[RMDB]
Chemical mapping of a 177-nucleotide RNA with DMS and 2A3.
The 2A3 profile rests on 2,839 reads.
The RNA was probed in 150 mM KOAc, 10 mM MgCl2 and 150 mM bicine (pH 8.5) at 24 C.

RNA sequence: GGGAACGACUCGAGUAGAGUCGAAAAGCCGAGGGGCUCCCGGCACCUCUGCUCACCGCCAGCGUCGGCAUCAGUGGCCUGUACGACCUCGCGCCCCUCCGGCAGACCGAGUUGCAGGCCGACCUGCCAUGGGCUAUAGUUUCGACUAUAGCCCAUGAAAAGAAACAACAACAACAAC
Reactivity to DMS in 0.01 (KOAc 150mM, MgCl2 10mM, bicine 150mM(pH8.5), 24C), signal-to-noise 5, nucleotides 027 to 126: g000c010c050g000a030g030g000g010g020c020u010c060c090c070g000g010c050a090c050c020u010c040u000g000c020u000c080a090c070c060g020c060c030a090g010c130g010u000c050g010g000c040a040u000c110a090g030u000g010g010c040c010u000g000u000a070c150g000a110c100c030u010c090g020c080g010c020c010c020c040u010c090c090g020g000c010a070g000a100c060c010g010a110g010u010u000g000c020a050g010g010c050c050g000a050c030c020u000g010c090
Reactivity to 2A3 in 0.01 (KOAc 150mM, MgCl2 10mM, bicine 150mM(pH8.5), 24C), signal-to-noise 2, nucleotides 027 to 126: g020c010c030g010a030g000g010g000g000c040u030c060c100c010g040g030c070a050c020c030u060c040u070g000c020u060c040a050c030c060g040c020c010a070g050c060g130u110c040g030g020c020a080u110c030a080g100u080g060g010c020c050u020g050u050a090c110g070a120c070c020u030c030g060c040g000c030c010c010c020u060c040c070g020g000c000a020g050a040c040c010g020a020g010u050u040g000c000a000g000g000c070c000g040a110c010c000u020g020c000